[RMDB]
RNA sequence: GGGAACGACUCGAGUAGAGUCGAAAAAGACUUAAAAACAAGCAUGUUUUCAAAUGGCACUAUGAGCUGCCAAUGAUGUAUCACCACCAUAUCUCAUUAUUCUCCAGUAAAUGUGAUAAUAAUGUCAGUAGGUAAUAGUGUUCGCACUAUUACCUACAAAAGAAACAACAACAACAAC
Reactivity to DMS in 0.01 (KOAc 150mM, MgCl2 10mM, bicine 150mM(pH8.5), 24C), signal-to-noise 3, nucleotides 027 to 126: a110g000a120c050u000u020a020a050a030a070a060c080a030a080g000c120a100u010g000u010u000u000u000c040a060a110a120u010g010g000c000a020c050u000a090u000g010a090g020c180u000g000c010c030a030a130u000g000a080u000g000u000a030u000c040a100c050c030a070c070c050a030u000a040u000c020u000c010a020u000u000a070u000u010c090u000c000c010a050g000u010a060a050a100u000g010u000g010a010u020a020a040u000a060a010u000g010u000c130a080
Reactivity to 2A3 in 0.01 (KOAc 150mM, MgCl2 10mM, bicine 150mM(pH8.5), 24C), signal-to-noise 4, nucleotides 027 to 126: a000g070a040c030u060u060a070a060a020a020a040c050a070a020g140c050a090u050g040u020u090u050u080c070a130a140a130u080g000g000c020a010c030u080a150u300g090a020g020c080u010g000c020c010a010a020u050g020a000u020g030u070a060u070c020a020c070c010a010c010c020a040u030a080u100c040u000c010a000u000u030a000u050u000c030u000c010c020a000g040u150a080a180a160u090g050u050g000a010u030a040a040u060a020a010u040g060u070c050a020
Structure probing data (DMS and 2A3) for a 177-nucleotide construct. The reactions ran in a buffer of 150 mM KOAc, 10 mM MgCl2 and 150 mM bicine (pH 8.5), at 24 C. For 2A3, 3,735 sequencing reads were counted. 2A3 adducts were read by reverse transcription with SuperScript II with manganese. The data come from the RNA Mapping Database (RMDB), library RFMREP.